[RMDB]
RNA sequence: GGGAACGACUCGAGUAGAGUCGAAAAGCGUACUACUCCUUGUAGCUAUGAAGACAUCCUCCCCACCUGUAUCCCAAAUAGGAUACAGAGGGAUGUUGGAGCUACAAUGGGAGUAUCGCAAAAGACUUAUCAGUAUGUUCGCAUACUGAUAAGUCAAGUACCUCUCAGACUUCGGUCUGAGAGGUACAAAAGAAACAACAACAACAAC
Reactivity to 2A3 in 0.01 (KOAc 150mM, MgCl2 10mM, bicine 150mM(pH8.5), 24C), signal-to-noise 1, nucleotides 027 to 156: g010c020g020u040a040c090u040a120c000u000c010c000u030u020g000u000a000g000c010u070a210u300g060a060a010g020a030c000a010u000c040c000u040c000c020c000c000a030c000c000u000g000u010a000u000c000c010c010a100a190a050u100a070g030g000a010u000a000c000a000g010a000g030g000g020a000u000g000u000u000g000g020a000g000c000u000a000c010a030a070u180g000g020g070a000g000u010a040u300c030g000c000a000a000a000a080g000a000c000u000u000a000u000c000a010g000u020a020u040g140u060u060c290g000c270a000u000a000c000u000g000a000u000a000a000g000u000c000a000a000
The record gives the reactivity of an RNA of 207 nucleotides to 2A3. It was measured as part of the RMDB library RNAMAK. 2A3 adducts were read by reverse transcription with SuperScript II with manganese.